The data come from the RNA Mapping Database (RMDB), library 15KREP. Chemical mapping of a 177-nucleotide RNA with 2A3 and DMS. For DMS the reverse transcriptase was MarathonRT. 2A3 adducts were read by reverse transcription with SuperScript II with manganese. The reactions ran in a buffer of 150 mM KOAc, 10 mM MgCl2 and 150 mM bicine (pH 8.5), at 24 C. The 2A3 profile rests on 2,121 reads.
[RMDB]
RNA sequence: GGGAACGACUCGAGUAGAGUCGAAAAAUCGGGGAGCCUCGACGAUCUCUUUGAUCUCCUGAAGGAGGAAGGAGCUCUCGAGCGCUCUCCCGCCCCUCGGAUGGGCCGCUUCCGGCGAACGAGCCCGCUUAUCGUAUAGCUUCGGCUAUACGAUAAGAAAAGAAACAACAACAACAAC
Reactivity to 2A3 in 0.01 (KOAc 150mM, MgCl2 10mM, bicine 150mM(pH8.5), 24C), signal-to-noise 2, nucleotides 027 to 126: a000u070c020g000g000g000g000a000g000c010c000u000c000g030a030c140g000a010u000c010u000c000u000u060u040g150a160u050c010u030c020c040u170g220a240a120g030g000a010g000g010a020a010g000g000a000g010c010u010c000u010c000g000a000g000c120g000c000u000c000u010c000c000c000g000c000c000c010c000u000c020g090g010a050u040g020g090g000c000c000g010c040u130u040c090c070g110g000c050g020a030a000c010g030a020g020c010c000c000g040
Reactivity to DMS in 0.01 (KOAc 150mM, MgCl2 10mM, bicine 150mM(pH8.5), 24C), signal-to-noise 2, nucleotides 027 to 126: a070u020c040g020g020g000g010a020g010c040c020u000c010g030a030c240g000a010u000c000u000c000u000u000u010g020a120u010c000u010c000c000u000g010a180a180g010g000a030g000g010a050a010g010g010a010g000c130u000c000u000c000g000a010g010c150g010c000u010c010u010c000c000c040g010c080c000c000c050u000c080g010g010a080u010g020g000g000c010c010g000c230u010u000c070c050g010g030c100g020a100a120c000g000a100g020c000c000c000g010